RNA sequence: GGGAACGACUCGAGUAGAGUCGAAAAAUGCCGCCGCGCGACGGCGAAAUCGCGAGCGGCGGGCGCACGGCGGAUGCCCGCGCGCAACUCAACGAACCCGAUUCCGUUGCGCAUUGGCAGAAACACACCUAAUAGGAGUGUUCGCACUCCUAUUAGGAAAAGAAACAACAACAACAAC
Reactivity to DMS in 0.01 (KOAc 150mM, MgCl2 10mM, bicine 150mM(pH8.5), 24C), signal-to-noise 6, nucleotides 027 to 126: a110u010g010c000c000g040c220c110g020c010g010c010g000a010c010g000g010c300g000a020a030a040u000c040g020c190g010a110g010c090g000g000c090g000g000g000c010g020c070a030c060g000g010c050g010g030a150u000g020c040c000c030g010c030g000c000g010c010a070a080c100u000c090a090a080c060g000a090a120c090c110c010g010a100u000u000c010c020g010u000u000g020c000g020c000a110u010u000g000g000c020a040g000a100a070a080c110a100c220a170
Reactivity to 2A3 in 0.01 (KOAc 150mM, MgCl2 10mM, bicine 150mM(pH8.5), 24C), signal-to-noise 4, nucleotides 027 to 126: a000u020g000c000c010g040c030c060g010c000g010c000g010a010c010g000g040c030g040a050a040a010u030c020g010c050g050a030g010c010g020g010c000g010g040g000c030g020c010a050c050g240g040c090g140g090a080u170g010c010c000c020g000c030g020c000g000c030a040a140c060u080c140a070a100c070g080a050a050c000c010c030g010a030u100u000c010c000g000u000u010g000c000g000c000a030u050u160g000g000c010a000g090a020a070a000c100a010c010a010